[RMDB]
RNA sequence: GGGAACGACUCGAGUAGAGUCGAAAAAUUUAGACAAGAGUGCUGGCCAUCCUUUUAAUAAGUUUGGCAAAGCUCGUGUCUAUUAUGAGAGCAUGUCUUACCAGGAGCAAGAUGAACUUUUUGCCAUACACCUGACCGUUCGCGGUCAGGAAAAGAAACAACAACAACAAC
Reactivity to 2A3 in 0.01 (KOAc 150mM, MgCl2 10mM, bicine 150mM(pH8.5), 24C), signal-to-noise 4, nucleotides 027 to 129: a000u020u010u010a000g000a000c000a050a000g020a000g040u100g020c050u050g080g000c000c000a000u010c010c000u030u030u050u040a190a190u290a090a030g000u000u000u000g000g000c000a080a120a020g010c000u000c010g000u030g000u000c000u000a030u070u080a040u070g060a010g000a000g010c040a070u040g020u030c000u030u040a100c040c010a080g050g020a070g010c000a000a030g020a050u040g030a060a090c030u090u060u050u070u140g060c000c000a050u040a050c050a050
This 170-nucleotide RNA was probed chemically with 2A3. Conditions: 150 mM KOAc, 10 mM MgCl2 and 150 mM bicine (pH 8.5), 24 C.